[RMDB]
RNA sequence: GGGAACGACUCGAGUAGAGUCGAAAAUGUUAGUCUGACCUAUCGAAAGGGAAUGUAGUUAAGAUUCUACAACUGGGAUGCAGAUUUUCAGCGGUAACGCAUAUGAACUUGGUGACAUUGGCAUGGGUCCAAUACUCCUUUUCGAAGGAGUAUUGGAAAAAGAAACAACAACAACAAC
Reactivity to DMS in 0.01 (KOAc 150mM, MgCl2 10mM, bicine 150mM(pH8.5), 24C), signal-to-noise 8, nucleotides 027 to 126: u010g010u000u000a040g000u010c020u000g000a150c040c020u000a080u000c070g010a070a120a090g010g000g010a100a100u010g010u000a030g010u000u010a100a110g010a150u010u010c010u000a030c030a060a110c090u000g010g000g010a070u000g000c060a050g000a060u000u010u000u010c050a080g010c060g000g000u010a060a080c070g020c050a090u010a100u010g000a040a050c090u000u010g010g010u010g000a040c080a060u000u000g000g010c040a040u010g000g000g010
Reactivity to 2A3 in 0.01 (KOAc 150mM, MgCl2 10mM, bicine 150mM(pH8.5), 24C), signal-to-noise 8, nucleotides 027 to 126: u040g000u010u020a030g020u000c030u020g120a150c020c010u040a050u100c060g100a130a050a040g070g040g040a120a140u090g010u020a030g010u020u080a130a050g030a210u090u020c000u020a020c000a090a040c040u030g000g020g030a030u080g060c020a010g020a090u050u040u010u090c030a020g000c020g020g020u070a070a040c030g000c030a010u040a090u200g070a040a040c030u040u050g040g000u030g040a030c020a080u040u070g020g000c010a030u020g090g000g020
An RNA of 177 nucleotides, treated with DMS and 2A3 and read out base by base. The reactions ran in a buffer of 150 mM KOAc, 10 mM MgCl2 and 150 mM bicine (pH 8.5), at 24 C. It was measured as part of the RMDB libraries RFM100 and RFMREP. 2A3 adducts were read by reverse transcription with SuperScript II with manganese. For DMS the reverse transcriptase was MarathonRT.